Structure probing data (2A3 and DMS) for a 177-nucleotide construct. The DMS profile rests on 1,461 reads. For DMS the reverse transcriptase was MarathonRT. Conditions: 150 mM KOAc, 10 mM MgCl2 and 150 mM bicine (pH 8.5), 24 C.
RNA sequence: GGGAACGACUCGAGUAGAGUCGAAAAACAUGAAGCUCAAUUCGAGCCUGCAGGCAUUCAUGUACUCCAUGCUGAAGGAUGCCAAUCCGAAGGCAGCCAAGAUGUCCGCUGAUAUCAUGAUCGAGCAGUAUUAAUGCCCGUUCGCGGGCAUUAAUACAAAAGAAACAACAACAACAAC
Reactivity to 2A3 in 0.01 (KOAc 150mM, MgCl2 10mM, bicine 150mM(pH8.5), 24C), signal-to-noise 2, nucleotides 027 to 126: a000c010a010u050g040a000a020g000c000u000c040a060a280u300u110c090g010a000g000c010c000u050g000c050a020g000g000c020a040u000u060c000a000u080g040u080a030c020u000c040c010a050u080g030c000u060g010a070a000g030g020a010u030g070c000c030a090a090u060c010c010g030a020a010g010g000c000a000g060c050c000a030a000g020a010u060g020u000c020c020g040c040u040g010a060u070a100u200c070a040u060g130a050u100c050g110a040g090c050a020
Reactivity to DMS in 0.01 (KOAc 150mM, MgCl2 10mM, bicine 150mM(pH8.5), 24C), signal-to-noise 3, nucleotides 027 to 126: a070c070a020u000g000a070a120g010c030u020c040a100a180u000u000c100g020a040g010c040c110u000g020c090a060g030g010c040a120u000u010c030a020u000g000u010a090c100u000c040c070a100u000g030c050u000g000a210a250g000g010a000u010g030c190c240a080a120u000c040c020g040a190a230g000g000c010a050g000c100c050a060a110g020a050u000g000u000c020c120g020c070u000g020a130u010a040u010c070a080u010g010a040u010c080g000a080g010c160a150